[RMDB]
RNA sequence: GGGAACGACUCGAGUAGAGUCGAAAAGAUAUGGACCGUGGACGCUCAUCGAUCCCGUACACCUGAGGUAUGUCGGAAACGACAUACGCAGGGUGUACGGGGGAGAGCGGUACACGGUCCUAAGUCAGGUAAAAUAUAUCUUCGGAUAUAUUUUACCAAAAGAAACAACAACAACAAC
Reactivity to 2A3 in 0.01 (KOAc 150mM, MgCl2 10mM, bicine 150mM(pH8.5), 24C), signal-to-noise 1, nucleotides 027 to 126: g050a030u100a050u200g000g000a000c000c000g040u020g000g030a000c000g000c030u030c010a280u300c110g070a030u050c010c000c000g000u000a000c010a010c000c030u050g020a020g020g020u000a000u010g010u020c020g010g020a060a070a070c020g010a010c010a000u020a000c000g000c030a010g000g000g030u010g000u010a000c000g020g000g000g000g000a010g000a020g030c000g000g080u220a010c010a000c020g010g000u000c000c010u000a000a000g000u010c060a010
Reactivity to DMS in 0.01 (KOAc 150mM, MgCl2 10mM, bicine 150mM(pH8.5), 24C), signal-to-noise 2, nucleotides 027 to 126: g020a060u010a300u000g000g000a000c030c010g020u000g010g010a260c030g030c020u000c010a300u000c270g020a070u000c000c000c000g030u000a000c000a020c000c000u000g010a300g000g010u000a000u020g000u000c000g000g000a110a100a210c000g040a020c000a000u000a000c000g010c030a300g000g010g010u000g020u000a000c010g010g020g000g000g010a020g000a010g030c020g000g000u010a080c020a000c000g000g000u010c000c000u000a000a050g000u000c030a130